This 177-nucleotide RNA was probed chemically with DMS.
For DMS the reverse transcriptase was MarathonRT.
The RNA was probed in 150 mM KOAc, 10 mM MgCl2 and 150 mM bicine (pH 8.5) at 24 C.
RNA sequence: GGGAACGACUCGAGUAGAGUCGAAAAGAUAUGGAUGGUGGACAGCUGCGCGCACUCCGAUAAGACGCACUCGGAAACGAGUGGCGUCUUUUGACGGAGGAUCGCAGCUGUCCACCAUCCUAAGUCAUCAACCAUAAAAGUUCGCUUUUAUGGUUGAAAAAGAAACAACAACAACAAC
Reactivity to DMS in 0.01 (KOAc 150mM, MgCl2 10mM, bicine 150mM(pH8.5), 24C), signal-to-noise 2, nucleotides 027 to 126: g000a070u020a300u010g000g010a010u000g020g010u000g000g000a040c020a010g000c030u010g000c010g020c130g040c300a300c020u000c000c000g000a150u000a020a000g020a020c000g000c000a040c010u010c010g000g010a110a130a150c000g000a020g030u010g020g020c020g010u000c000u010u000u000u000g020a170c100g020g000a010g000g010a140u000c020g010c000a020g000c000u000g000u020c000c000a000c000c020a000u000c010c000u010a020a060g010u010c040a220